An RNA of 177 nucleotides, treated with DMS and 2A3 and read out base by base.
It was measured as part of the RMDB library 15KREP.
Conditions: 150 mM KOAc, 10 mM MgCl2 and 150 mM bicine (pH 8.5), 24 C.
As a SHAPE reagent, 2A3 marks flexible, mostly unpaired nucleotides at the ribose 2'-OH.
Values cover nucleotides 27 to 126.
For 2A3, 1,285 sequencing reads were counted.
High DMS reactivity at an A or C suggests that its Watson-Crick edge is free.
[RMDB]
RNA sequence: GGGAACGACUCGAGUAGAGUCGAAAAUCUGCUUAUUUUGGAACUGUAAUGUACCAAAAUAUCCUAAUAAUGCAAUUGUAUGCAGGUUUGACACACGUGUGCAUUCUGAGUUCAAUUUGCCAGGUUGCUUUGUGUUCUAGUUCGCUAGAACACAAAGAAAAGAAACAACAACAACAAC
Reactivity to DMS in 0.01 (KOAc 150mM, MgCl2 10mM, bicine 150mM(pH8.5), 24C), signal-to-noise 3, nucleotides 027 to 126: u010c030u000g010c040u000u000a010u000u000u000u000g010g020a120a030c010u000g010u010a120a080u020g020u010a070c000c000a000a000a020a020u000a010u010c030c040u020a100a110u000a080a080u010g000c040a030a050u000u000g000u000a030u010g000c040a080g010g000u000u010u000g010a100c050a020c050a120c300g010u050g030u000g010c010a020u000u010c020u010g000a190g000u000u000c050a030a060u000u000u000g030c030c170a040g000g000u000u000g010
Reactivity to 2A3 in 0.01 (KOAc 150mM, MgCl2 10mM, bicine 150mM(pH8.5), 24C), signal-to-noise 1, nucleotides 027 to 126: u010c000u010g030c030u060u020a000u020u080u000u000g000g000a030a040c000u040g050u230a080a150u190g000u010a040c010c000a010a020a010a030u040a030u000c000c000u080a120a110u110a170a030u130g000c030a010a080u070u020g040u050a010u030g000c040a000g050g040u030u030u060g100a070c030a010c000a000c080g130u120g010u020g190c000a010u040u000c010u030g060a050g050u030u050c010a000a030u090u050u100g000c010c010a030g070g010u070u080g020